[RMDB]
An RNA of 177 nucleotides, treated with 2A3 and DMS and read out base by base. The reactions ran in a buffer of 150 mM KOAc, 10 mM MgCl2 and 150 mM bicine (pH 8.5), at 24 C. Values cover nucleotides 27 to 126.
RNA sequence: GGGAACGACUCGAGUAGAGUCGAAAAGUGCUGGUCGGCCUCACUAUGGCCGCCGCCGCGGUGGUGCGCGCCUGGACAUUGGGCGUGGGCCCGCAGGUGACCCUGACGGUCGCGCUGACGGUGGCCGUGCGUAAUCCUUCUUCGGAAGGAUUACGCAAAAAGAAACAACAACAACAAC
Reactivity to 2A3 in 0.01 (KOAc 150mM, MgCl2 10mM, bicine 150mM(pH8.5), 24C), signal-to-noise 3, nucleotides 027 to 126: g090u070g040c080u080g020g070u290c070g020g000c020c010u060c040a130c100u160a140u180g010g010c000c000g010c000c000g000c010c010g000c020g000g040u180g040g030u180g030c030g010c010g030c030c010u060g060g050a260c090a170u200u300g020g000g000c020g020u050g000g110g000c020c000c000g000c000a060g060g060u080g040a080c000c000c060u110g180a150c020g000g000u050c020g000c000g060c150u090g020a040c020g040g000u000g010g000c000c000g000
Reactivity to DMS in 0.01 (KOAc 150mM, MgCl2 10mM, bicine 150mM(pH8.5), 24C), signal-to-noise 2, nucleotides 027 to 126: g040u060g000c000u010g050g000u040c060g010g000c040c030u000c160a110c180u050a050u020g000g000c010c000g010c030c000g040c000c010g010c030g000g000u010g020g000u000g010c030g010c010g000c000c000u000g000g010a120c300a150u050u060g010g000g000c010g060u000g010g000g000c000c000c010g000c020a060g000g040u000g030a120c040c020c070u030g000a130c110g020g010u010c020g010c000g000c090u000g020a140c040g000g030u000g000g000c020c000g000